[RMDB]
RNA sequence: GGGAACGACUCGAGUAGAGUCGAAAAACAUAGGCCAUGCUUACGAGCAUGGCCUAUGACGAAUCUCAAGCAAUCAAGCAUUCUACUUCUAUUGCAACACUGAGGAGCUUACGAUCUCCUCAGUGAAAAAAGAGAGUAAUGUUCGCAUUACUCUCAACUGUCCCUAUACCUUCGGGUAUAGGGACAGAAAAGAAACAACAACAACAAC
Reactivity to 2A3 in 0.01 (KOAc 150mM, MgCl2 10mM, bicine 150mM(pH8.5), 24C), signal-to-noise 1, nucleotides 027 to 156: a000c000a000u010a000g000g000c000c000a000u030g000c000u100u130a070c190g070a010g000c010a010u000g010g090c000c000u010a010u000g000a000c010g060a020a070u020c020u020c090a070a000g010c010a030a030u170c020a030a020g090c010a090u250u130c040u160a110c000u070u030c000u090a120u060u060g010c010a050a040c000a050c010u000g000a010g000g000a000g070c010u140u250a070c050g180a190u140c000u020c040c000u000c000a000g000u000g000a010a010a010a010a010a010g000a000g000a000g000u000a000a000u010g040u030u080c130g000c160a000u000u000a000c000u010c000u000c010a000a000
Chemical mapping of a 207-nucleotide RNA with 2A3. The RNA was probed in 150 mM KOAc, 10 mM MgCl2 and 150 mM bicine (pH 8.5) at 24 C.